[RMDB]
RNA sequence: GGGAACGACUCGAGUAGAGUCGAAAACGAUCUAGUUCGCUAGAUCGAAAAUCCUAAGUCGGUGAGGGAACUGACAUGAUCGACUCGGAAACGAGUCAGAUCAACAGCAGUUCCUCCCCACCACCGAUAUGGAAAAAGACCGUCCUUCGGGACGGUCGCAGUCCGUUUGGUUCGCCAAACGGACUGCAAAAGAAACAACAACAACAAC
Reactivity to 2A3 in 0.01 (KOAc 150mM, MgCl2 10mM, bicine 150mM(pH8.5), 24C), signal-to-noise 2, nucleotides 027 to 156: c040g000a010u000c010u040a100g060u130u050c130g120c110u170a000g000a000u000c000g000a070a000a020a140u040c000c000u090a160a040g000u010c010g000g000u000g000a020g030g030g000a000a000c010u000g100a100c010a140u020g020a010u020c000g020a000c000u000c000g020g030a110a040a080c000g000a000g000u000c070a080g000a010u020c000a010a060c040a080g040c010a000g010u000u030c000c020u030c030c020c000c000a050c010c000a000c000c000g000a000u040a050u120g060g070a070a120a000a020a000g020a000c010c000g000u000c030c010u030u100c240g040g000g000a010c020g010g000u010c010
The record gives the reactivity of an RNA of 207 nucleotides to 2A3. For 2A3, 1,393 sequencing reads were counted. The RNA was probed in 150 mM KOAc, 10 mM MgCl2 and 150 mM bicine (pH 8.5) at 24 C.